[RMDB]
RNA sequence: GGGAACGACUCGAGUAGAGUCGAAAAUUAGCCCGGACUUUUGAGAGAAAUGGUCACCUCUCAGCCCCUCCACCUUGGGGUGCCCUAUCCGAACACUGCUGUUUCGGUAGAAAGGCUAAGCACGUCGCUAAUACUGAUAGUUCGCUAUCAGUAUUAGAAAAGAAACAACAACAACAAC
Reactivity to DMS in 0.01 (KOAc 150mM, MgCl2 10mM, bicine 150mM(pH8.5), 24C), signal-to-noise 9, nucleotides 027 to 126: u010u010a130g010c000c000c020g000g020a080c100u000u000u000u000g000a020g000a020g000a060a070a070u000g020g010u000c090a120c210c000u000c010u000c010a040g010c010c000c000c000u000c160c110a120c150c130u000u010g010g010g000g030u000g010c010c020c000u000a120u000c000c000g000a020a020c060a080c210u010g020c200u010g000u000u000u000c000g000g010u000a030g000a050a090a120g000g000c020u010a030a090g020c150a060c150g010u000c160g000
Reactivity to 2A3 in 0.01 (KOAc 150mM, MgCl2 10mM, bicine 150mM(pH8.5), 24C), signal-to-noise 7, nucleotides 027 to 126: u100u040a030g050c000c000c000g030g170a150c040u100u070u060u040g010a010g000a010g020a010a110a100u160g100g030u080c030a030c030c000u000c000u000c000a000g010c010c000c000c000u040c060c030a150c030c030u050u080g010g010g000g020u010g010c010c000c000u010a020u000c000c000g000a000a000c060a010c080u300g060c040u040g090u120u080u030c010g000g000u010a000g010a020a020a010g000g000c000u010a020a000g060c040a010c100g190u120c040g010